[RMDB]
RNA sequence: GGGAACGACUCGAGUAGAGUCGAAAAGAUAUGGAUGUCGUAGACCGAUAAGGUCUGUUCGGAAACGAACAAGACCUUUUGACGGUUGAAGACAUCCUAAGUCAAAAUCUCACCUUCGGGUGAGAAAGUCUCCAUUAAGCUUCGGCUUAAUGGAGACAAAAGAAACAACAACAACAAC
Reactivity to DMS in 0.01 (KOAc 150mM, MgCl2 10mM, bicine 150mM(pH8.5), 24C), signal-to-noise 1, nucleotides 027 to 126: g040a040u000a300u000g000g000a000u000g000u000c000g000u000a300g000a000c010c000g040a120u020a020a010g040g010u000c000u000g040u010u000c000g020g000a040a190a160c020g010a000a010c000a000a120g000a020c000c000u000u000u000u000g010a300c090g000g000u000u000g000a160a300g000a000c000a000u000c000c010u000a050a140g010u000c040a020a060a090a160u000c000u000c010a010c000c010u000u010c300g010g000g000u000g010a000g020a000a010a070